[RMDB]
RNA sequence: GGGAACGACUCGAGUAGAGUCGAAAAGAUAUGGAUACAUUGAUACUGCUGAGAACUGCGAUAAGUAUCCCAUCGGAAACGAUGGGUACUUUUGACGCAGACAGCAGUAUCAAUGUAUCCUAAGUCAGAUGAUUCUAGUCUUCGGACUAGAAUCAUCAAAAGAAACAACAACAACAAC
Reactivity to DMS in 0.01 (KOAc 150mM, MgCl2 10mM, bicine 150mM(pH8.5), 24C), signal-to-noise 1, nucleotides 027 to 126: g020a050u020a300u000g000g010a000u000a000c000a010u020u010g010a030u000a020c000u000g030c010u030g010a240g020a100a110c030u000g030c000g020a190u000a000a000g010u000a010u050c010c010c000a000u010c010g000g000a220a090a190c000g020a000u000g000g000g040u000a000c000u000u000u000u010g020a130c170g000c000a000g020a210c000a020g000c010a010g010u000a020u000c010a000a000u000g010u000a020u000c000c000u010a020a030g010u000c070a220

Structure probing data (DMS) for a 177-nucleotide construct.
DMS (dimethyl sulfate) methylates the pairing face of unpaired adenines and cytosines.
For DMS the reverse transcriptase was MarathonRT.
Conditions: 150 mM KOAc, 10 mM MgCl2 and 150 mM bicine (pH 8.5), 24 C.